[RMDB]
RNA sequence: GGGAACGACUCGAGUAGAGUCGAAAACGAGACGCUGGAGACGCCCGGGAACAAGGAAAUAGAACAAGGUACGGUAGAAAAGAGCGAGCCUCCCGAUACGAGUUUGCCAGGACCUAUCAAGUUUGGAGAGGACAGAUGUUCGCAUCUGUCAAAAGAAACAACAACAACAAC
Reactivity to 2A3 in 0.01 (KOAc 150mM, MgCl2 10mM, bicine 150mM(pH8.5), 24C), signal-to-noise 9, nucleotides 027 to 129: c040g000a010g030a030c040g000c080u050g020g010a020g010a020c040g040c010c020c000g010g010g000a050a030c040a030a020g040g020a020a020a020u150a040g070a060a010c040a050a030g050g010u070a040c060g030g040u070a030g110a040a120a050a010g060a000g030c040g010a010g010c000c010u040c010c000c000g010a020u050a080c030g010a030g060u040u060u060g040c010c010a020g010g020a030c000c000u020a050u090c040a080a070g020u030u070u080g070g010a110g010a030g010
Reactivity to DMS in 0.01 (KOAc 150mM, MgCl2 10mM, bicine 150mM(pH8.5), 24C), signal-to-noise 9, nucleotides 027 to 129: c090g020a080g000a030c090g020c030u010g020g010a040g030a050c100g000c030c020c050g000g000g000a060a030c080a070a040g000g000a040a040a060u000a100g000a040a050c100a050a050g040g020u000a050c050g020g020u010a070g010a080a060a070a080g020a070g030c060g030a020g000c050c050u030c020c020c040g030a030u030a080c130g010a100g000u000u010u000g000c050c030a020g010g010a030c050c010u000a070u020c090a060a090g000u010u030u020g000g000a090g010a080g000

Structure probing data (2A3 and DMS) for a 170-nucleotide construct. For 2A3 the reverse transcriptase was SuperScript II with manganese.